Chemical mapping of a 177-nucleotide RNA with DMS and 2A3.
High DMS reactivity at an A or C suggests that its Watson-Crick edge is free.
For 2A3, 54,024 sequencing reads were counted.
The DMS profile rests on 51,096 reads.
It was measured as part of the RMDB library OK1LIB.
For DMS the reverse transcriptase was MarathonRT.
Reactivities are given for positions 27 through 126.
The RNA was probed in 150 mM KOAc, 10 mM MgCl2 and 150 mM bicine (pH 8.5) at 24 C.

RNA sequence: GGGAACGACUCGAGUAGAGUCGAAAAUGGGUGUCUGGUGCACGUAGUCGAGCUAGCGACGUCGUUGGCGAUGGCGGGUUAGUGCACGAUUUAGCCGAGCUAGGGUCUACUCGACGAGGCGCCCAAAGGGGUGGGCUCACUUCGGUGGGUUCACCCCAAAAGAAACAACAACAACAAC
Reactivity to DMS in 0.01 (KOAc 150mM, MgCl2 10mM, bicine 150mM(pH8.5), 24C), signal-to-noise 9, nucleotides 027 to 126: u020g000g010g010u000g010u000c020u010g010g020u000g000c020a010c020g010u030a220g000u000c000g000a140g010c020u000a020g010c020g010a290c250g010u030c030g030u010u000g000g010c020g000a160u060g010g000c010g010g010g010u020u030a160g010u010g010c020a010c000g000a050u010u010u030a100g020c010c020g010a050g010c090u010a130g000g000g000u010c030u010a120c010u000c010g000a030c010g000a270g010g000c040g010c000c000c000a020a070a090
Reactivity to 2A3 in 0.01 (KOAc 150mM, MgCl2 10mM, bicine 150mM(pH8.5), 24C), signal-to-noise 9, nucleotides 027 to 126: u090g030g010g000u050g010u020c050u130g110g010u020g020c020a010c050g070u080a030g020u010c010g020a030g020c010u030a010g010c010g210a260c130g160u300c030g040u070u090g030g010c050g080a160u190g020g010c030g030g090g030u070u130a040g010u030g030c010a010c010g000a000u040u040u080a040g010c010c020g040a020g020c040u080a050g020g060g050u020c010u020a030c000u010c010g010a010c040g010a030g000g020c060g060c000c000c010a040a020a010